[RMDB]
RNA sequence: GGGAACGACUCGAGUAGAGUCGAAAAGAUAUGGACCCUAUGGUAGCAACAGCCUCCCAUCGGAAACGAUGGUGAGGACAUGCUGCUGUAGGGUCCUAAGUCAAACUCAUCUCUUCGGAGAUGAGAACUCAUUAUUGAUCUUCGGAUCAAUAAUGAGAAAAGAAACAACAACAACAAC
Reactivity to 2A3 in 0.01 (KOAc 150mM, MgCl2 10mM, bicine 150mM(pH8.5), 24C), signal-to-noise 3, nucleotides 027 to 126: g030a020u080a040u170g000g000a000c000c000c000u000a020u020g030g000u030a010g010c010a020a150c060a210g060c020c010u000c000c000c000a000u000c000g010g030a110a050a050c020g010a000u010g010g150u200g020a000g000g010a000c000a010u010g000c000u010g000c010u000g020u000a000g010g010g000u010c000c000u000a000a000g000u000c010a010a000a020c000u000c000a000u000c000u000c000u030u050c300g210g000a010g000a000u010g010a000g000a000a010
Reactivity to DMS in 0.01 (KOAc 150mM, MgCl2 10mM, bicine 150mM(pH8.5), 24C), signal-to-noise 5, nucleotides 027 to 126: g010a050u000a300u000g000g010a000c000c000c000u000a000u000g010g010u010a010g030c000a040a060c300a210g000c000c000u000c000c000c000a010u010c000g020g000a180a090a180c010g000a010u000g000g010u020g030a010g000g010a010c080a130u000g000c000u010g010c000u000g010u000a000g010g000g010u000c000c000u000a000a040g010u000c050a120a130a220c010u000c000a000u000c000u000c000u010u010c190g020g010a030g000a010u000g000a000g000a050a150
Chemical mapping of a 177-nucleotide RNA with 2A3 and DMS.
For DMS the reverse transcriptase was MarathonRT.
The RNA was probed in 150 mM KOAc, 10 mM MgCl2 and 150 mM bicine (pH 8.5) at 24 C.